An RNA of 177 nucleotides, treated with 2A3 and DMS and read out base by base. The RNA was probed in 150 mM KOAc, 10 mM MgCl2 and 150 mM bicine (pH 8.5) at 24 C. For DMS, 5,301 sequencing reads were counted. DMS adducts were read by reverse transcription with MarathonRT.

[RMDB]
RNA sequence: GGGAACGACUCGAGUAGAGUCGAAAAGCAUAGCGUCAAGUUGGUUGACCAGAAGUCUGGUUAGCAAAGAGAGUAAAACCAAAAGGUUAGACGCACUCUGUGAAAAAGUACGAAAGUACAAAGAUAAUACAGAACAUACUUUCGAGUAUGUUCUGUAAAAAGAAACAACAACAACAAC
Reactivity to 2A3 in 0.01 (KOAc 150mM, MgCl2 10mM, bicine 150mM(pH8.5), 24C), signal-to-noise 2, nucleotides 027 to 126: g060c000a080u100a060g010c010g010u030c050a100a100g050u090u110g210g010u000u030g050a000c000c020a000g030a300a030g150u080c010u020g020g000u020u000a000g000c020a030a140a030g120a010g000a000g090u150a070a140a020a000c000c010a070a250a180a030g040g020u040u030a030g000a000c020g030c010a030c010u040c000u010g060u040g030a210a050a010a000a000g020u010a000c020g020a120a010a000g010u000a000c030a000a060a010g090a010u180a110a030
Reactivity to DMS in 0.01 (KOAc 150mM, MgCl2 10mM, bicine 150mM(pH8.5), 24C), signal-to-noise 5, nucleotides 027 to 126: g000c120a100u000a100g030c020g020u000c020a090a160g010u000u000g020g020u000u000g020a020c020c000a020g010a300a160g010u010c010u000g000g010u010u000a030g010c050a060a070a090g000a080g000a100g010u000a070a060a030a040c010c010a050a060a090a120g010g010u000u000a060g010a030c020g010c020a130c060u010c040u000g000u020g010a050a100a080a070a090g010u000a010c000g010a090a070a120g020u000a010c000a050a060a060g000a090u010a060a110